[RMDB]
Overview: An RNA of 177 nucleotides, treated with DMS and read out base by base. Reactivities are given for positions 27 through 126.

RNA sequence: GGGAACGACUCGAGUAGAGUCGAAAAAGCCGCCGCCGCAGGCGCGGGCCUGCAGGUGGCUGGUGAUUUGUUUUCUACCAUCUAUGCUGUUGAAAACCAGAAGGCCAUCGCGGCAGAACAGAGGAAAUACUAAAUAGGGGUUCGCCCCUAUUUAGUAAAAAGAAACAACAACAACAAC
Reactivity to DMS in 0.01 (KOAc 150mM, MgCl2 10mM, bicine 150mM(pH8.5), 24C), signal-to-noise 2, nucleotides 027 to 126: a300g000c000c010g040c000c000g030c040c050g010c010a020g030g020c000g020c300g010g010g020c000c010u000g020c000a070g150g010u000g000g020c020u000g010g000u000g000a150u010u000u000g000u000u000u000u010c020u000a160c040c040a080u000c080u000a080u000g020c020u000g000u000u000g010a010a070a080a220c050c050a170g020a120a130g020g010c020c010a150u000c030g000c050g000g000c030a060g010a030a080c120a080g000a120g000g000a080a050a160